[RMDB]
RNA sequence: GGGAACGACUCGAGUAGAGUCGAAAAGGCGCCCAGUUCGGCGAGUGUGCGAGUUUUGAACUCCAUGACUUGCGGUUGGUCGAUCUCAUACACCACGGUCUGGGCGGGCCAGGCCAGCCGGUAUGCCUGUUAUAGCUAUCUUCGGAUAGCUAUAACAAAAAGAAACAACAACAACAAC
Reactivity to 2A3 in 0.01 (KOAc 150mM, MgCl2 10mM, bicine 150mM(pH8.5), 24C), signal-to-noise 5, nucleotides 027 to 126: g040g010c010g010c000c020c000a000g000u050u120c050g120g030c070g050a100g050u020g000u010g010c100g020a010g020u030u060u110u200g150a050a020c000u000c010c010a060u170g170a170c070u060u150g050c030g030g040u090u040g000g000u020c020g010a120u010c010u010c030a020u060a060c030a020c010c020a030c030g000g000u000c000u010g010g000g020c080g030g010g000c010c010a000g000g030c000c010a010g030c020c040g020g000u090a050u110g040c010c020
Reactivity to DMS in 0.01 (KOAc 150mM, MgCl2 10mM, bicine 150mM(pH8.5), 24C), signal-to-noise 6, nucleotides 027 to 126: g000g010c020g010c030c000c010a030g010u000u000c020g020g020c090g010a090g030u000g010u000g010c130g000a010g010u000u000u000u010g020a040a040c010u000c010c010a060u010g020a090c140u010u000g010c080g020g010u010u000g010g010u000c010g000a050u000c020u000c020a060u000a050c030a060c030c020a130c060g010g010u000c010u000g000g000g010c060g000g000g010c020c020a070g000g010c020c040a120g010c080c070g000g000u000a060u010g010c060c040